[RMDB]
Structure probing data (DMS and 2A3) for a 177-nucleotide construct. For 2A3 the reverse transcriptase was SuperScript II with manganese.

RNA sequence: GGGAACGACUCGAGUAGAGUCGAAAAGAUAUGGAGUGUCUAUGAAGCUCGCGAAACAACUCUCGGAAACGAGAGUUGGAGAGCCAUAGAGCACUCCUAAGUCAAAAGCAUCGCUUCGGCGAUGCAACACAUGGAACGAGUUCGCUCGUUCCAUGUGAAAAGAAACAACAACAACAAC
Reactivity to DMS in 0.01 (KOAc 150mM, MgCl2 10mM, bicine 150mM(pH8.5), 24C), signal-to-noise 1, nucleotides 027 to 126: g010a040u030a300u000g010g010a010g020u000g050u010c010u000a020u000g010a140a120g010c000u010c020g030c140g000a120a090a300c000a000a000c000u010c000u000c000g000g020a080a100a170c020g000a000g000a020g010u000u000g000g010a200g000a000g000c000c000a020u000a000g020a100g000c010a020c000u000c000c010u010a010a050g010u010c060a120a150a160a050g000c000a020u000c000g010c000u000u020c190g040g010c000g010a010u000g020c030a080a040
Reactivity to 2A3 in 0.01 (KOAc 150mM, MgCl2 10mM, bicine 150mM(pH8.5), 24C), signal-to-noise 1, nucleotides 027 to 126: g040a020u040a050u170g010g020a000g000u030g010u000c000u020a040u010g170a300a110g000c010u040c030g060c140g120a240a180a080c000a000a000c000u020c000u000c000g020g060a060a080a060c040g000a020g000a020g010u020u000g000g000a040g010a000g010c000c000a000u000a040g050a070g000c000a010c010u000c000c010u000a030a000g000u000c040a080a000a140a110g000c000a000u010c000g000c020u110u150c300g120g020c000g010a020u030g000c000a000a000
DMS adducts were read by reverse transcription with MarathonRT. The RNA was probed in 150 mM KOAc, 10 mM MgCl2 and 150 mM bicine (pH 8.5) at 24 C. For DMS, 1,027 sequencing reads were counted. For 2A3, 2,140 sequencing reads were counted.